[RMDB]
RNA sequence: GGGAACGACUCGAGUAGAGUCGAAAAGCAUGGGAAUACGAUACGUGGGUCAUCCCGUUGUCGCGAUCGCAUCUACCGGGUAACGCCUAAGAGGUUUUCACGUAGCAGUAUAGAAGUACACAGUGUGACAAGGAACGUCGUUCGCGAUGUUUCUUGUAAAAGAAACAACAACAACAAC
Reactivity to 2A3 in 0.01 (KOAc 150mM, MgCl2 10mM, bicine 150mM(pH8.5), 24C), signal-to-noise 9, nucleotides 027 to 126: g050c040a050u110g030g010g080a100a040u100a090c030g060a050u040a080c060g050u120g040g040g040u100c030a090u120c020c000c010g020u030u100g060u050c040g000c030g070a080u070c050g000c030a050u000c020u050a040c020c010g000g000g020u030a070a030c030g020c000c000u040a090a030g060a100g080g010u040u020u030u060c020a020c020g010u030a030g030c070a020g030u020a030u050a110g150a150a020g070u100a030c060a010c030a070g070u060g020u060g140
Reactivity to DMS in 0.01 (KOAc 150mM, MgCl2 10mM, bicine 150mM(pH8.5), 24C), signal-to-noise 9, nucleotides 027 to 126: g010c070a060u010g000g010g010a120a060u020a050c070g010a080u020a020c050g010u020g010g000g010u010c110a120u020c010c010c020g020u010u010g010u020c090g010c060g010a110u020c060g000c050a100u010c080u010a050c070c030g000g000g010u010a070a090c140g000c020c010u010a070a080g010a100g000g010u000u010u000u010c020a020c020g010u010a070g010c060a080g010u010a050u020a080g010a080a080g010u010a050c080a070c070a100g010u020g010u010g000